[RMDB]
RNA sequence: GGGAACGACUCGAGUAGAGUCGAAAACAAUCAAAGCAUCUCGAAAACCUUUGAUCUCAAGGGCAUUGGUCAGUUUCAAUUACUUAUCAGUGUUCACCUACCGGUAUGUACUAACGUUUAAGUCCAGAGGGUAGACGGAUAGUCAAAACAAAAGAGGCACUGCAAAUGAGUUCGCUCAUUUGCAGUGAAAAGAAACAACAACAACAAC
Reactivity to 2A3 in 0.01 (KOAc 150mM, MgCl2 10mM, bicine 150mM(pH8.5), 24C), signal-to-noise 5, nucleotides 027 to 156: c040a000a060u090c040a050a040a020g040c030a090u090c050u090c160g130a100a100a110a120c010c020u040u010u030g030a030u040c040u050c110a090a160g010g000g000c000a010u000u020g020g010u020c040a010g020u020u080u150c120a160a130u270u080a020c000u020u000a000u020c000a010g000u000g000u020u030c020a050c020c000u000a010c010c000g010g150u030a010u030g010u010a010c010u020a100a130c110g120u140u180u150a080a020g020u000c000c010a010g020a060g040g000g000u010a000g030a050c060g040g000a030u050a060g050u080c020a030a030a070a090c050a040a090a080a030g090a030g050g000
Reactivity to DMS in 0.01 (KOAc 150mM, MgCl2 10mM, bicine 150mM(pH8.5), 24C), signal-to-noise 2, nucleotides 027 to 156: c110a130a080u000c050a050a040a060g010c060a100u000c030u010c080g010a090a070a140a130c130c010u010u000u010g020a090u000c080u000c060a080a110g030g000g040c020a050u000u000g020g000u000c020a020g030u000u000u000c090a130a090u000u020a020c010u000u010a030u000c020a020g040u000g050u000u000c000a100c020c020u010a050c050c000g070g070u000a060u000g020u000a080c030u000a060a140c090g000u010u020u010a050a100g010u000c020c010a050g010a110g010g030g030u010a100g020a080c030g010g010a120u000a050g010u010c080a030a080a070a190c060a040a080a080a120g000a130g020g010